Record summary:
Structure probing data (2A3 and DMS) for a 177-nucleotide construct. High 2A3 reactivity points to a flexible backbone, as in loops and unpaired stretches. The 2A3 profile rests on 1,102 reads. It was measured as part of the RMDB library OK2TRN. The RNA was probed in 150 mM KOAc, 10 mM MgCl2 and 150 mM bicine (pH 8.5) at 24 C. 2A3 adducts were read by reverse transcription with SuperScript II with manganese.
[RMDB]
RNA sequence: GGGAACGACUCGAGUAGAGUCGAAAAGGAUGCUUAUGAACUGGAGAAAGGCUACAAAGUGAGAUAUACUCCAUUGGCUCCAGGAUCUUACUUUGCUUCUGUCAAGUACAAUGGAAUCCAUGCUCCACUUUUAGCCAGUGUUCGCACUGGCUAAAAGAAAAGAAACAACAACAACAAC
Reactivity to 2A3 in 0.01 (KOAc 150mM, MgCl2 10mM, bicine 150mM(pH8.5), 24C), signal-to-noise 1, nucleotides 027 to 126: g050g010a060u070g040c030u130u090a080u220g010a040a040c010u070g040g010a040g010a040a120a050g160g050c080u120a020c110a100a060a000g060u080g100a020g020a030u050a050u070a180c010u000c000c000a050u050u040g030g000c010u020c070c000a000g000g020a010u030c010u010u040a100c040u040u120u180g010c030u030u010c010u010g110u130c050a100a000g000u010a120c060a030a000u020g040g010a070a060u020c020c010a010u090g000c000u000c040c030a080
Reactivity to DMS in 0.01 (KOAc 150mM, MgCl2 10mM, bicine 150mM(pH8.5), 24C), signal-to-noise 2, nucleotides 027 to 126: g000g010a060u000g020c030u000u010a130u000g010a050a040c080u010g000g010a080g000a060a100a090g020g010c030u020a130c140a000a010a050g010u000g010a170g010a030u010a090u010a130c080u000c010c020a070u000u000g010g000c050u000c080c060a030g010g000a030u000c010u000u020a060c070u000u000u000g010c140u010u000c020u010g000u010c130a030a030g010u000a070c030a020a110u010g000g010a060a060u010c070c030a090u010g000c070u000c030c050a130